[RMDB]
RNA sequence: GGGAACGACUCGAGUAGAGUCGAAAAUCUUGUCGCGCAUCACCACUUUUACGGCCUGCUCAUAGACGUCUUCGCCGUCUUCCCCACCCAUGGCCGUGUUGUCGAAGACUGCCGGUUCGGCCGCGAAUGAGCGAUGACGAUUCGUCGUCAUCGCUCAAAAAGAAACAACAACAACAAC
Reactivity to DMS in 0.01 (KOAc 150mM, MgCl2 10mM, bicine 150mM(pH8.5), 24C), signal-to-noise 1, nucleotides 027 to 126: u000c030u000u000g040u000c090g000c070g010c040a150u000c010a040c010c050a100c060u000u000u000u000a170c110g020g000c010c000u010g020c110u000c110a130u000a070g010a040c120g010u010c070u000u030c040g000c090c010g020u000c030u000u000c030c020c040c050a050c070c030c040a150u000g010g000c000c050g000u010g010u000u000g000u000c050g010a100a150g010a090c060u000g030c020c030g020g000u020u000c100g030g000c020c000g000c090g000a060a140